Chemical mapping of a 177-nucleotide RNA with DMS and 2A3. Source: RMDB library OK2TST, as collected in RNAgym. For DMS, 10,773 sequencing reads were counted. 2A3 adducts were read by reverse transcription with SuperScript II with manganese. The RNA was probed in 150 mM KOAc, 10 mM MgCl2 and 150 mM bicine (pH 8.5) at 24 C.
[RMDB]
RNA sequence: GGGAACGACUCGAGUAGAGUCGAAAAAUAUUUACUGGAGAAUGGGCUCAACCUCUUCCUCUGGGUGGGAGCAAGCGUCCAACAGGGUGUUGUCCAGAGCCUUUUCAGCGUCUCCUCCUUCAGUCAGGUCUUAAGUGAAAUUCGUUUCACUUAAGACAAAAGAAACAACAACAACAAC
Reactivity to DMS in 0.01 (KOAc 150mM, MgCl2 10mM, bicine 150mM(pH8.5), 24C), signal-to-noise 8, nucleotides 027 to 126: a070u010a050u010u000u000a090c040u000g010g010a050g010a110a070u010g010g010g010c020u000c030a120a110c130c040u000c040u000u000c140c010u000c050u000g010g000g020u010g000g010g010a050g010c120a060a090g010c080g000u000c020c010a060a090c120a070g000g010g000u000g010u000u000g010u000c070c090a170g000a080g010c020c010u010u000u000u010c080a080g010c080g000u000c040u000c020c020u000c050c020u000u000c060a040g010u010c280a130g010
Reactivity to 2A3 in 0.01 (KOAc 150mM, MgCl2 10mM, bicine 150mM(pH8.5), 24C), signal-to-noise 4, nucleotides 027 to 126: a010u110a080u090u170u080a070c040u040g030g020a030g050a080a110u090g060g010g000c010u030c040a030a040c010c010u060c040u060u040c020c010u030c040u080g170g040g020u040g010g070g000a060g070c100a100a040g060c030g030u020c010c010a040a030c030a060g040g000g030u060g020u050u050g040u060c040c050a050g010a030g000c000c000u050u010u040u070c050a050g030c010g060u000c020u010c050c010u030c000c000u040u030c020a080g040u050c030a070g080